[RMDB]
RNA sequence: GGGAACGACUCGAGUAGAGUCGAAAAUCGCGGCGGUACGCGGCCGGAAUGAUCAGCAGGCCGGUCUUGCCGUCGUAAAUCUUGCCGGUGACGGUGUUCAGGAACAUGCCGGCCUUCGCGCCUUCGAAUAACGCGCGAGAUUCGUCUCGCGCGUUAUAAAAGAAACAACAACAACAAC
Reactivity to DMS in 0.01 (KOAc 150mM, MgCl2 10mM, bicine 150mM(pH8.5), 24C), signal-to-noise 1, nucleotides 027 to 126: u000c120g010c050g000g030c000g010g040u000a050c300g030c170g020g010c010c000g010g030a040a080u000g000a220u010c230a120g000c000a070g010g040c010c000g010g010u000c030u010u000g000c010c020g000u000c000g020u000a000a060a060u000c040u000u000g010c000c030g010g000u000g000a060c120g040g060u000g000u000u000c120a170g060g020a050a040c050a100u000g000c050c000g000g000c000c140u010u010c060g010c000g000c000c050u010u070c040g030a140

Conditions: 150 mM KOAc, 10 mM MgCl2 and 150 mM bicine (pH 8.5), 24 C. Structure probing data (DMS) for a 177-nucleotide construct. Values cover nucleotides 27 to 126.